[RMDB]
RNA sequence: GGGAACGACUCGAGUAGAGUCGAAAAAUUCGAUGCCAAAACCUAAGCACCAUGGCUUCAAAUAUACACAGUUAAUAAAAGGUUUUCCGCUUCAAGAGAGGAUAUCUCAGGGAUUUAUGCCAGAAUCAUUUUGGCCAUUAAGCCAAGAGCCAAAGUAAGCAUUAGGACUGUUCGCAGUCCUAAUGCUAAAAGAAACAACAACAACAAC
Reactivity to 2A3 in 0.01 (KOAc 150mM, MgCl2 10mM, bicine 150mM(pH8.5), 24C), signal-to-noise 1, nucleotides 027 to 156: a000u130u070c050g040a020u060g060c040c000a190a000a000a000c130c000u170a120a070g070c070a020c000c100a060u120g030g010c000u010u080c100a060a140a020u180a020u130a040c010a000c000a110g050u110u070a120a000u100a030a120a060a010g030g010u010u000u050u000c000c000g040c060u050u040c040a160a120g040a000g020a020g100g060a150u070a050u170c080u040c050a000g030g000g080a000u090u090u120a030u040g050c010c060a060g010a020a080u130c240a180u020u080u000u000g000g000c000c130a100u040u150a070a000g000c000c000a040a000g010a010g000c000c000a000a010a060g120u160a070
An RNA of 207 nucleotides, treated with 2A3 and read out base by base. The data come from the RNA Mapping Database (RMDB), library OK3TST. The reactions ran in a buffer of 150 mM KOAc, 10 mM MgCl2 and 150 mM bicine (pH 8.5), at 24 C. Values cover nucleotides 27 to 156.